[RMDB]
RNA sequence: GGGAACGACUCGAGUAGAGUCGAAAAAGCACUGGUACGAUACGUCGUACCAGUGCAGUCGUUGGGAUGGAACGCAAUUAAAUACAUGUGUGACGUGUAUUUGCGAACGACGUGAUUAUUUUUCAAAAUCACGCUAUCGUGUUCGCACGAUAGCGAACAUACCGUCUCAGUUCGCUGAGACGGUAUGAAAAGAAACAACAACAACAAC
Reactivity to 2A3 in 0.01 (KOAc 150mM, MgCl2 10mM, bicine 150mM(pH8.5), 24C), signal-to-noise 4, nucleotides 027 to 156: a000g000c000a000c000u000g000g000u000a000c000g000a020u020a040c230g090u010c000g000u010a000c000c000a000g000u000g030c010a000g000u000c030g000u010u050g050g030g120a140u140g040g100a100a050c030g000c020a020a050u200u140a100a080a010u010a000c010a010u010g100u020g110u170g300a060c020g020u010g010u010a000u000u040u000g010c000g020a030a010c010g040a010c040g020u040g050a030u040u090a140u090u130u030u050u060c100a060a050a020a060u100c040a040c040g000c010u000a000u000c010g000u000g030u080u040c250g010c060a000c010g000a000u000a000g000c000g000a010a000
Reactivity to DMS in 0.01 (KOAc 150mM, MgCl2 10mM, bicine 150mM(pH8.5), 24C), signal-to-noise 2, nucleotides 027 to 156: a070g020c000a000c010u020g050g030u000a000c010g010a090u000a060c300g080u000c000g050u000a010c000c000a000g010u030g040c000a030g030u010c000g080u020u000g000g010g020a160u000g010g020a100a170c020g030c070a020a150u010u010a040a070a030u000a000c040a030u010g000u010g030u000g030a110c070g050u000g040u010a040u000u000u000g010c050g000a030a140c030g010a060c020g010u010g010a080u010u000a190u000u010u020u020u010c190a080a060a070a130u000c010a020c000g010c000u000a030u000c010g010u020g000u000u000c220g000c000a020c050g020a100u000a070g010c000g010a020a120